[RMDB]
This 177-nucleotide RNA was probed chemically with 2A3 and DMS. It was measured as part of the RMDB libraries RFM100 and RFMREP. 2A3 is a SHAPE reagent: it acylates the 2'-hydroxyl of flexible nucleotides of all four kinds. The reactions ran in a buffer of 150 mM KOAc, 10 mM MgCl2 and 150 mM bicine (pH 8.5), at 24 C. Reactivities are rounded to 0.1 and cut off at 0 and 3.
RNA sequence: GGGAACGACUCGAGUAGAGUCGAAAACACUAAAGCCCGGGAAUAUGCAACCAGUUACAUUUGAGGCCAUUUGGGCUUAAGCGUAUUCCAUGGAAAGUUAUCGUCCCACAUUUCGGAAAUUAUAUUCCUAAUUCAAACAGUUCGCUGUUUGAAUUAGAAAAGAAACAACAACAACAAC
Reactivity to 2A3 in 0.01 (KOAc 150mM, MgCl2 10mM, bicine 150mM(pH8.5), 24C), signal-to-noise 9, nucleotides 027 to 126: c040a000c020u100a170a070a060g070c000c000c000g000g000g010a000a000u000a010u010g000c010a020a100c040c040a080g050u110u100a120c040a160u110u090u190g100a110g040g110c070c040a100u110u100u200g100g000g000c000u030u040a040a010g000c000g000u000a000u000u000c000c000a010u060g000g010a050a070a020g010u050u050a110u220c080g030u040c010c030c000a030c020a030u120u200u150c080g060g090a030a040a030u230u100a120u070a060u140u050c010
Reactivity to DMS in 0.01 (KOAc 150mM, MgCl2 10mM, bicine 150mM(pH8.5), 24C), signal-to-noise 5, nucleotides 027 to 126: c120a020c080u000a120a190a160g010c110c010c030g010g000g000a030a010u000a010u000g010c000a120a130c270c190a060g020u020u010a070c070a030u000u010u000g020a190g030g020c160c010a070u010u000u010g020g000g000c000u000u010a050a130g010c000g020u000a010u000u010c000c000a030u020g000g010a070a070a040g010u000u010a090u030c120g010u000c000c010c010a150c210a130u010u010u000c110g010g000a030a040a090u020u030a150u010a160u020u000c020

DMS adducts were read by reverse transcription with MarathonRT.